The record gives the reactivity of an RNA of 177 nucleotides to DMS and 2A3. The RNA was probed in 150 mM KOAc, 10 mM MgCl2 and 150 mM bicine (pH 8.5) at 24 C. The data come from the RNA Mapping Database (RMDB), library OK1LIB. The 2A3 profile rests on 977 reads. For 2A3 the reverse transcriptase was SuperScript II with manganese. The DMS profile rests on 1,598 reads.

[RMDB]
RNA sequence: GGGAACGACUCGAGUAGAGUCGAAAAAAAUCUCCUCAGGGGGCAAACUUUUUAAUACCGUAACCCCCCAAAGUUCACCAAAGGGUACGGAGUUACUCUUACGCGUCGUAAAAGUGUCACCAACAGAAUGUGCACAGUAAUUCGUUACUGUGCACAUAAAAGAAACAACAACAACAAC
Reactivity to DMS in 0.01 (KOAc 150mM, MgCl2 10mM, bicine 150mM(pH8.5), 24C), signal-to-noise 2, nucleotides 027 to 126: a090a070a200u030c090u030c060c100u040c200a170g030g000g040g000g000c070a040a070a130c050u000u000u030u060u080a050a100u020a090c060c020g000u000a130a120c110c010c000c020c000c020a060a070a150g010u000u010c100a140c040c040a020a100a020g000g000g000u010a030c080g000g000a120g010u040u000a050c000u000c010u000u000a050c010g000c080g040u000c030g020u000a030a110a040a090g000u000g030u020c000a000c060c020a030a070c100a110g000a120
Reactivity to 2A3 in 0.01 (KOAc 150mM, MgCl2 10mM, bicine 150mM(pH8.5), 24C), signal-to-noise 2, nucleotides 027 to 126: a000a000a000u030c010u020c020c020u070c020a010g030g020g000g000g000c000a070a090a000c010u170u050u000u040u060a160a240u140a090c070c000g110u040a030a070c000c010c000c000c030c000a000a090a000g050u080u120c000a010c080c040a070a080a050g040g000g000u010a020c060g000g030a040g010u100u050a020c000u000c000u000u020a010c070g000c010g070u040c000g030u050a010a010a010a000g010u050g010u070c030a020c050c000a080a070c010a070g130a090